[RMDB]
RNA sequence: GGGAACGACUCGAGUAGAGUCGAAAAGUGUCCAUUCCGCUGCCAGGUCGCGGUCCCGGUGGAAGCCGCGCAGGGUAAUCAGCUCGAUAGCUUUGCGCGCAUCUUGGAUAUCUUGAGGCGAUGCGGCCCUGUAAAAGAACUUCGGUUCUUUUACAGGAAAAGAAACAACAACAACAAC
Reactivity to 2A3 in 0.01 (KOAc 150mM, MgCl2 10mM, bicine 150mM(pH8.5), 24C), signal-to-noise 9, nucleotides 027 to 126: g110u080g040u030c030c000a060u100u040c020c010g040c050u040g030c020c020a070g060g030u070c010g020c020g050g020u060c000c010c010g010g000u040g020g020a070a040g060c060c020g000c010g000c000a000g000g000g010u030a070a060u040c020a040g180c120u130c160g040a040u030a040g020c000u020u020u040g000c020g000c010g000c000a030u020c030u030u070g030g020a030u020a090u140c040u040u130g080a080g050g020c040g110a120u120g040c000g020g010c000
Reactivity to DMS in 0.01 (KOAc 150mM, MgCl2 10mM, bicine 150mM(pH8.5), 24C), signal-to-noise 5, nucleotides 027 to 126: g020u040g020u020c020c030a180u010u020c020c030g010c050u020g020c020c120a090g010g010u020c030g010c060g010g000u010c060c030c040g020g010u020g000g000a090a070g020c080c040g000c010g020c000a010g000g000g000u000a130a040u010c030a140g010c190u000c110g000a030u010a300g000c010u000u000u000g010c020g010c000g010c060a040u020c030u020u000g000g000a100u000a060u020c050u010u020g010a130g010g010c040g000a060u020g010c050g000g000c130
Chemical mapping of a 177-nucleotide RNA with 2A3 and DMS. For DMS the reverse transcriptase was MarathonRT. The RNA was probed in 150 mM KOAc, 10 mM MgCl2 and 150 mM bicine (pH 8.5) at 24 C.